[RMDB]
RNA sequence: GGGAACGACUCGAGUAGAGUCGAAAAUUACACGGUAGGUCGUGAACAAGCCCGGAGUACAUUCCCAAUUGGAACUAGGGAACCCCUCCGGUCUUGUCCAACCUCUGUUUCGGCAGAGGAUACCGUGCUCCACAGCUGUAAGGCUGUGGGCCCGAGAGUACUUCAUUAGGUUCGCCUAAUGAAGUACAAAAGAAACAACAACAACAAC
Reactivity to 2A3 in 0.01 (KOAc 150mM, MgCl2 10mM, bicine 150mM(pH8.5), 24C), signal-to-noise 2, nucleotides 027 to 156: u070u050a020c000a000c010g000g010u010a010g030g130u170c100g080u100g130a150a020c010a000a000g000c000c000c000g000g000a010g000u070a050c050a130u030u030c000c000c030a020a070u130u130g130g100a120a090c130u040a230g000g000g000a000a010c060c000c000c000u000c000c000g000g000u000c000u000u000g000u000c000c000a050a080c000c000u010c000u000g050u040u080u080c190g120g000c000a000g000a000g000g010a010u020a010c000c000g000u000g000c010u000c000c000a000c000a000g000c000u040g100u300a190a070g100g000c000u000g000u000g000g010g000c000c010c010g060a080g010a010
Reactivity to DMS in 0.01 (KOAc 150mM, MgCl2 10mM, bicine 150mM(pH8.5), 24C), signal-to-noise 2, nucleotides 027 to 156: u000u010a070c000a020c030g060g020u000a010g020g000u000c120g000u000g010a020a050c030a020a040g030c130c000c000g040g020a060g030u010a110c100a220u000u000c010c000c000a170a300u010u000g030g000a210a140c230u000a270g000g020g020a020a090c060c090c230c000u000c010c010g010g010u000c010u000u010g010u000c010c010a080a100c010c000u000c000u000g000u000u000u010c270g050g010c000a030g000a030g000g000a140u000a000c000c010g040u000g000c030u000c000c000a010c010a020g010c020u000g000u030a190a190g030g020c000u020g060u000g000g000g030c000c000c010g020a190g010a290
Background:
Chemical mapping of a 207-nucleotide RNA with 2A3 and DMS. For DMS the reverse transcriptase was MarathonRT.